RNA sequence: GGGAACGACUCGAGUAGAGUCGAAAAUGGUAUACGCUGACAAGCCCAUAACCUUUGGUAGUGACGUUGCGGAGAAUGUCACUGCAGUAAAGCUUUUGAUGCCUCAUUCAUUCAAGAACGCAACGACAUACUCCCUCGGUUUCGACCGAGGGAGUAUAAAAGAAACAACAACAACAAC
Reactivity to 2A3 in 0.01 (KOAc 150mM, MgCl2 10mM, bicine 150mM(pH8.5), 24C), signal-to-noise 1, nucleotides 027 to 126: u090g030g000u040a090u030a110c090g000c040u020g040a070c040a050a010g040c000c040c000a020u090a120a150c030c000u040u070u140g060g000u090a030g000u000g040a000c000g020u010u050g050c100g060g090a110g010a050a010u020g000u000c020a020c050u030g060c000a010g010u140a020a100a000g000c000u170u070u080u100g070a030u070g000c000c040u000c010a070u150u000c000a000u080u010c010a040a020g020a100a010c040g000c020a000a040c010g010a030c010
Reactivity to DMS in 0.01 (KOAc 150mM, MgCl2 10mM, bicine 150mM(pH8.5), 24C), signal-to-noise 2, nucleotides 027 to 126: u000g000g020u010a090u000a100c110g000c000u000g000a080c160a060a100g020c050c040c050a080u010a100a100c080c020u010u050u000g020g040u010a010g010u000g000a110c010g040u000u000g000c050g030g000a100g030a040a020u000g000u020c060a010c060u010g000c020a030g020u000a030a080a080g000c090u000u030u000u000g010a030u000g000c070c030u010c060a030u000u010c060a110u020u010c100a060a120g010a040a170c050g040c070a000a090c040g000a050c140